[RMDB]
RNA sequence: GGGAACGACUCGAGUAGAGUCGAAAAGCACGUAUCUUCGGAUACGUGCAAAUAAAAUCAGCGGUAAGCAGGCGUAAAAUAUUACCCCUGAACGCCUGCUUAAAAGUCUUCCCUUCGGGGAAGACAACUAUGAGCUAAUGUUCGCAUUAGCUCAUAGAAAAGAAACAACAACAACAAC
Reactivity to 2A3 in 0.01 (KOAc 150mM, MgCl2 10mM, bicine 150mM(pH8.5), 24C), signal-to-noise 1, nucleotides 027 to 126: g000c000a000c000g000u010a000u000c000u040u070c240g100g000a000u000a000c000g010u000g000c000a010a010a000u020a000a010a000a050u100c030a010g080c020g170g070u020a020a000g000c000a000g010g000c000g020u020a010a040a070a030u210a080u120u220a150c010c010c020c000u000g020a030a010c000g000c000c000u000g010c000u000u000a000a000a000a000g000u000c000u000u000c010c000c000u000u030c230g050g000g000g000a000a000g010a000c000a000a010
Reactivity to DMS in 0.01 (KOAc 150mM, MgCl2 10mM, bicine 150mM(pH8.5), 24C), signal-to-noise 4, nucleotides 027 to 126: g010c000a000c000g010u000a010u010c000u000u010c220g050g010a010u000a000c000g030u000g010c000a000a010a030u000a050a050a100a100u010c120a070g000c150g010g000u000a010a040g000c010a000g000g010c010g030u000a020a060a090a160u000a100u010u000a300c050c000c020c040u000g000a150a020c010g010c010c000u000g000c010u000u000a020a060a070a130g000u000c000u000u000c000c000c000u000u020c150g040g000g010g000a000a000g010a000c010a010a050
Source: RMDB library M2PK50, as collected in RNAgym. Chemical mapping of a 177-nucleotide RNA with 2A3 and DMS. For DMS the reverse transcriptase was MarathonRT. The RNA was probed in 150 mM KOAc, 10 mM MgCl2 and 150 mM bicine (pH 8.5) at 24 C.